[RMDB]
RNA sequence: GGGAACGACUCGAGUAGAGUCGAAAAUUGGCGGGGUAAUGGCCCACCAAGCCGAAGACGGGUAGCGGGUGUGAGAGCACGACCCGCGACAUCGGGACUGAGACACUGCCCGGACUCCUACGGGAGGGGUAUAUUAUUUCUUCGGAAAUAAUAUACCAAAAGAAACAACAACAACAAC
Reactivity to DMS in 0.01 (KOAc 150mM, MgCl2 10mM, bicine 150mM(pH8.5), 24C), signal-to-noise 4, nucleotides 027 to 126: u000u010g020g010c010g010g010g000g020u010a110a090u020g010g000c000c000c010a040c020c020a030a050g010c010c010g020a130a080g010a120c060g000g000g010u000a070g020c010g000g000g000u000g020u000g020a210g020a160g000c030a020c020g000a040c000c000c010g000c040g000a050c180a050u000c020g000g010g000a110c070u000g000a170g000a100c080a060c090u010g000c000c000c010g010g000a080c020u010c010c010u000a110c160g010g000g010a030g000g000
Reactivity to 2A3 in 0.01 (KOAc 150mM, MgCl2 10mM, bicine 150mM(pH8.5), 24C), signal-to-noise 4, nucleotides 027 to 126: u060u040g030g000c070g010g000g010g000u040a090a090u090g130g100c030c000c000a010c000c010a020a020g020c010c010g050a050a010g080a050c040g050g000g000u050a020g030c010g000g050g000u020g010u040g040a300g000a020g170c020a010c050g130a070c010c000c000g000c010g010a010c010a050u060c020g000g010g080a060c030u070g060a020g010a060c020a020c070u050g030c010c010c000g060g010a060c010u010c000c010u040a060c170g060g000g010a010g050g040
The record gives the reactivity of an RNA of 177 nucleotides to DMS and 2A3. 2A3 is a SHAPE reagent: it acylates the 2'-hydroxyl of flexible nucleotides of all four kinds. For DMS, 5,641 sequencing reads were counted. The reactions ran in a buffer of 150 mM KOAc, 10 mM MgCl2 and 150 mM bicine (pH 8.5), at 24 C.